[RMDB]
RNA sequence: GGGAACGACUCGAGUAGAGUCGAAAAGAAUGAAGAUUCGUCUUCAUUCAAAUAAAAAUAGCUAGAAAACGAUCAAAACUAGCAAAAUACAUAACGAUCGAUAAACACAGCGUUUCGACGCUGUGAACAAACUGACGUAGUUCGCUACGUCAGUUUGAAAAGAAACAACAACAACAAC
Reactivity to DMS in 0.01 (KOAc 150mM, MgCl2 10mM, bicine 150mM(pH8.5), 24C), signal-to-noise 1, nucleotides 027 to 126: g000a000a010u000g000a000a030g050a040u000u010c220g010u000c000u000u000c000a020u000u000c010a060a070a080u000a020a040a090a100a070u000a080g010c000u000a000g000a000a010a050a040c050g000a030u010c000a200a050a090a090c000u000a000g000c020a080a060a110a080u000a080c270a050u000a100a140c240g000a000u000c000g000a170u010a080a030a200c000a000c020a000g010c010g000u000u000u010c150g010a020c030g000c000u020g020u010g010a050a100
Reactivity to 2A3 in 0.01 (KOAc 150mM, MgCl2 10mM, bicine 150mM(pH8.5), 24C), signal-to-noise 2, nucleotides 027 to 126: g000a000a010u030g000a000a000g000a020u020u100c090g010u000c050u000u020c000a000u000u010c000a000a010a000u070a010a020a000a010a020u100a040g020c000u000a000g000a040a110a030a100c010g010a000u020c000a030a050a000a080c010u010a020g010c030a020a020a190a000u120a050c090a040u080a140a050c060g000a010u020c010g050a050u150a030a170a000c020a000c000a020g000c010g010u020u070u130c200g040a010c010g000c000u000g000u000g000a030a010

An RNA of 177 nucleotides, treated with DMS and 2A3 and read out base by base. DMS adducts were read by reverse transcription with MarathonRT. The RNA was probed in 150 mM KOAc, 10 mM MgCl2 and 150 mM bicine (pH 8.5) at 24 C. The 2A3 profile rests on 2,441 reads.